Overview
Chemical mapping of a 177-nucleotide RNA with 2A3 and DMS.

RNA sequence: GGGAACGACUCGAGUAGAGUCGAAAAAAUUCUGGGAGCCAUCUUAUUAUGCCUUGGUGUAGCACUGACAUUCAUCUUCCGUUUAAGAAAAGGUAGUAUUUCCUUAAUUGCAGUGGUCUCCACUGGGCGUAUCCUUGAGUUUCGACUCAAGGAUACGAAAAGAAACAACAACAACAAC
Reactivity to 2A3 in 0.01 (KOAc 150mM, MgCl2 10mM, bicine 150mM(pH8.5), 24C), signal-to-noise 2, nucleotides 027 to 126: a010a010u130u040c000u020g030g040g010a020g040c030c010a030u010c020u100u180a150u150u020a080u160g020c030c010u030u110g070g000u020g030u060a000g010c010a010c020u020g080a060c020a040u070u100c020a020u030c020u030u010c030c040g090u090u110u080a130a090g060a040a110a000a000g040g000u030a040g030u010a120u030u050u040c010c000u070u090a140a070u090u100g070c010a010g020u020g060g030u070c030u000c050c010a000c010u040g000g090g000
Reactivity to DMS in 0.01 (KOAc 150mM, MgCl2 10mM, bicine 150mM(pH8.5), 24C), signal-to-noise 3, nucleotides 027 to 126: a060a090u000u000c020u010g000g020g010a080g010c090c040a040u000c050u010u000a060u000u010a060u020g010c030c010u010u040g040g000u010g000u000a070g000c050a040c060u000g010a090c060a080u000u000c090a070u010c080u000u000c050c090g020u020u000u000a060a070g010a030a060a050a030g000g010u000a040g000u000a090u000u000u000c010c020u000u000a050a090u000u000g020c020a030g000u000g000g010u000c060u010c040c020a040c030u010g000g000g000

For 2A3 the reverse transcriptase was SuperScript II with manganese. The 2A3 profile rests on 1,582 reads.